An RNA of 177 nucleotides, treated with 2A3 and DMS and read out base by base.
Values cover nucleotides 27 to 126.
For 2A3 the reverse transcriptase was SuperScript II with manganese.
RNA sequence: GGGAACGACUCGAGUAGAGUCGAAAAGGGGCAAAUCCUUAUUUGCUAUGACAUAACUACAUUUGACUACUCAAAAUCAUUUGUUAUCACAAGCCCGACUACAUCAGUGACAUUAAGAAAUAGAGGAAUGAUACACCUCUUUCGAGAGGUGUAUCAUAAAAGAAACAACAACAACAAC
Reactivity to 2A3 in 0.01 (KOAc 150mM, MgCl2 10mM, bicine 150mM(pH8.5), 24C), signal-to-noise 6, nucleotides 027 to 126: g080g010g010g010c060a010a010a090u060c050c000u090u050a110u040u060u010g030c020u070a100u150g030a030c020a090u210a130a050c060u080a030c090a120u040u020u050g020a020c040u070a040c020u090c130a040a150a040a170u030c040a050u020u060u090g040u060u090a090u130c030a040c000a140a020g010c030c010c000g030a020c010u110a060c030a050u070c010a010g050u030g080a020c010a060u110u070a130a050g070a070a080a040u120a020g080a040g050g060a080
Reactivity to DMS in 0.01 (KOAc 150mM, MgCl2 10mM, bicine 150mM(pH8.5), 24C), signal-to-noise 4, nucleotides 027 to 126: g000g000g000g010c030a060a100a050u000c080c060u020u050a090u010u000u010g010c020u010a040u010g000a100c110a080u010a070a100c140u000a050c040a040u000u000u000g000a050c030u030a070c080u010c090a040a100a130a110u010c120a030u000u020u000g010u000u010a040u010c050a030c100a040a100g000c020c000c000g000a080c050u010a020c110a020u000c080a060g010u010g010a100c060a050u020u010a040a070g010a050a050a050u020a060g010a140g000g010a120